[RMDB]
RNA sequence: GGGAACGACUCGAGUAGAGUCGAAAAGAAGGAGAUGAAAGCGACUUUAGAAUCGGCUAACUGAGCAGGCAGAUACAGACGGCAAGUAUCGUCGCCAGAGAUACAGUCGCAAAUAGCCGUAGGAGAACCCAUCACGCUAUUUCGAUAGCGUGAUGGGAAAAGAAACAACAACAACAAC
Reactivity to 2A3 in 0.01 (KOAc 150mM, MgCl2 10mM, bicine 150mM(pH8.5), 24C), signal-to-noise 2, nucleotides 027 to 126: g110a080a050g020g010a130g010a020u050g080a010a120a000g010c020g020a020c010u080u080u060a080g050a010a060u080c040g000g060c030u040a090a120c040u050g020a010g010c010a190g050g040c030a100g000a000u000a000c050a000g060a040c000g010g040c000a030a030g000u010a000u020c010g030u020c040g000c020c000a040g020a000g000a050u040a100c050a010g000u010c000g000c000a000a040a000u060a000g010c000c020g000u010a000g030g190a140g000a030a060
Reactivity to DMS in 0.01 (KOAc 150mM, MgCl2 10mM, bicine 150mM(pH8.5), 24C), signal-to-noise 2, nucleotides 027 to 126: g000a070a010g000g000a110g000a100u020g000a040a100a080g010c050g000a010c000u000u030u040a020g000a210a030u020c010g000g020c030u000a210a220c050u000g000a110g060c090a090g030g040c000a050g040a030u000a000c050a050g000a100c060g020g020c020a130a090g000u010a000u000c020g020u000c070g010c030c010a010g000a080g000a040u020a090c100a010g000u000c050g000c010a050a040a090u020a080g030c020c040g000u010a090g010g010a070g030a110a200
Source information: Chemical mapping of a 177-nucleotide RNA with 2A3 and DMS. For 2A3, 1,607 sequencing reads were counted. Values cover nucleotides 27 to 126. Reactivities are rounded to 0.1 and cut off at 0 and 3. Source: RMDB library OK1LIB, as collected in RNAgym.